[RMDB]
An RNA of 177 nucleotides, treated with DMS and 2A3 and read out base by base.
2A3 adducts were read by reverse transcription with SuperScript II with manganese.
For DMS, 1,034 sequencing reads were counted.
RNA sequence: GGGAACGACUCGAGUAGAGUCGAAAAUCAGGUGUCUUCGGACACCUGAAAAGAAAGCGGAAAACUCCGAAAUAAAACGGUGAGGGCCGCAACCCACCAUAAAAACUUCUGGGUUCGCCCAGAAGAAGACCUUAUAUGUGUUCGCACAUAUAAGGUCAAAAGAAACAACAACAACAAC
Reactivity to DMS in 0.01 (KOAc 150mM, MgCl2 10mM, bicine 150mM(pH8.5), 24C), signal-to-noise 1, nucleotides 027 to 126: u020c000a000g000g030u010g000u000c000u000u030c100g050g010a060c000a010c000c000u000g010a030a020a040a190g010a080a110a140g000c000g000g020a030a100a020a130c040u020c000c000g020a020a110a090u000a100a070a180a130c060g000g000u000g000a050g000g000g020c000c000g000c030a030a060c050c000c010a120c210c070a090u010a050a060a110a130a090c010u000u000c000u000g000g000g050u000u000c280g000c000c000c000a010g010a000a000g000a090a060
Reactivity to 2A3 in 0.01 (KOAc 150mM, MgCl2 10mM, bicine 150mM(pH8.5), 24C), signal-to-noise 2, nucleotides 027 to 126: u010c000a000g000g000u010g000u010c030u030u090c260g010g010a000c000a000c000c000u020g010a000a000a000a010g010a010a020a000g000c010g030g000a060a130a110a110c020u020c020c010g070a040a180a070u250a050a160a010a010c010g000g000u040g040a080g030g080g020c010c010g000c000a020a050c000c000c000a020c000c030a140u220a150a130a010a060a110c000u000u000c000u000g000g000g060u030u050c170g060c020c010c000a000g010a000a000g000a000a020